[RMDB]
This 177-nucleotide RNA was probed chemically with DMS. For DMS the reverse transcriptase was MarathonRT.
RNA sequence: GGGAACGACUCGAGUAGAGUCGAAAAGAUAUGGAGCCACCUUCGCGACGAUCUAUGUAACAAGAGUAGAUACAUCGGAAACGAUGUAUCUACUCCGCCCAUAGGGAGCGAAGUGGCUCCUAAGUCAGGACAUACCCUAGUUCGCUAGGGUAUGUCCAAAAGAAACAACAACAACAAC
Reactivity to DMS in 0.01 (KOAc 150mM, MgCl2 10mM, bicine 150mM(pH8.5), 24C), signal-to-noise 2, nucleotides 027 to 126: g000a040u010a300u000g010g010a010g000c010c000a000c210c150u000u000c000g040c010g000a030c300g020a010u010c000u000a000u000g010u030a100a130c280a120a040g000a030g010u000a000g010a030u000a020c000a000u020c000g010g000a120a080a190c000g000a010u000g030u000a000u000c010u000a000c000u000c000c030g000c300c200c020a010u000a010g000g000g010a020g060c000g000a020a010g040u000g020g020c000u000c000c000u000a010a050g000u010c010a140
The data come from the RNA Mapping Database (RMDB), library TTRINS.
DMS (dimethyl sulfate) methylates the pairing face of unpaired adenines and cytosines.
Reactivities are given for positions 27 through 126.